[RMDB]
The record gives the reactivity of an RNA of 170 nucleotides to DMS and 2A3.
The RNA was probed in 150 mM KOAc, 10 mM MgCl2 and 150 mM bicine (pH 8.5) at 24 C.
The DMS profile rests on 6,500 reads.
For DMS the reverse transcriptase was MarathonRT.
For 2A3 the reverse transcriptase was SuperScript II with manganese.
Values are in units of 0.01, from 0 to 300, in steps of 10.

RNA sequence: GGGAACGACUCGAGUAGAGUCGAAAACCCUGUCUCCUCGGUUCUUCUUCGAUCCGGACCGGCUCAUCUCGGCAAGGGGCGGCAGUCCUCAGUACUCUUACUCUUUCCUAUAAAGAGGAGACUGCUGGCAGCGGUCACUUCGGUGACCGCAAAAGAAACAACAACAACAAC
Reactivity to DMS in 0.01 (KOAc 150mM, MgCl2 10mM, bicine 150mM(pH8.5), 24C), signal-to-noise 2, nucleotides 027 to 129: c000c010c000u050g000u010c020u000c030c040u010c020g000g000u130u000c000u020u000c050u040u060c150g020a170u000c020c050g030g000a040c240c020g000g070c030u030c100a070u080c020u000c040g010g000c160a120a130g080g010g060g010c080g000g050c130a030g020u050c010c010u030c050a100g000u020a090c120u020c020u040u000a200c040u010c120u010u030u000c040c090u040a100u080a090a050a050g070a010g040g000a060g020a030c010u030g040c080u080g040g000c050a100
Reactivity to 2A3 in 0.01 (KOAc 150mM, MgCl2 10mM, bicine 150mM(pH8.5), 24C), signal-to-noise 4, nucleotides 027 to 129: c000c000c010u020g040u000c040u000c000c000u010c010g050g000u070u020c040u130u020c000u090u120c120g040a070u010c000c020g000g000a010c050c000g030g000c010u000c030a110u020c030u010c030g060g030c040a050a080g030g010g010g030c010g030g060c020a020g010u000c010c020u030c000a020g020u070a110c010u010c000u060u110a230c010u050c000u070u120u060c040c030u130a130u150a190a070a020g010a000g010g000a020g000a000c010u000g000c010u000g080g030c040a040